[RMDB]
RNA sequence: GGGAACGACUCGAGUAGAGUCGAAAAGGCAGCGAAUUCGUUCGCUGCCAAUACUGGACGUGGAGCCGGCUUCACGGCGCACGUCGAUGACGCCCGGGCCGGAGAAUCCAGAUUUCGAUCUGGAUAAGAUAUCAAAAGGAUUCGUCCUUUUGAUAUCAAAAGAAACAACAACAACAAC
Reactivity to DMS in 0.01 (KOAc 150mM, MgCl2 10mM, bicine 150mM(pH8.5), 24C), signal-to-noise 9, nucleotides 027 to 126: g000g020c010a010g010c000g010a020a020u000u010c200g010u000u000c000g020c000u000g000c000c000a010a010u000a080c130u000g010g000a030c030g020u000g000g000a170g030c010c010g000g010c200u010u010c150a100c040g010g010c020g010c020a030c010g010u000c050g000a070u000g010a120c120g000c020c000c030g010g000g010c020c030g000g010a110g010a150a060u000c000c000a010g000a020u000u000u010c170g010a020u000c000u000g000g000a010u000a030a090
Reactivity to 2A3 in 0.01 (KOAc 150mM, MgCl2 10mM, bicine 150mM(pH8.5), 24C), signal-to-noise 7, nucleotides 027 to 126: g010g000c000a000g010c010g010a010a020u080u110c160g060u110u000c010g020c000u000g000c000c000a000a000u010a000c000u050g090g020a010c010g020u020g010g050a070g030c000c010g030g020c080u250u220c150a080c090g010g000c010g000c000a010c010g040u020c010g020a110u080g050a030c060g040c010c010c000g000g040g010c040c020g100g040a070g060a070a030u000c000c000a000g000a010u060u070u100c170g040a010u000c000u010g000g000a000u010a040a030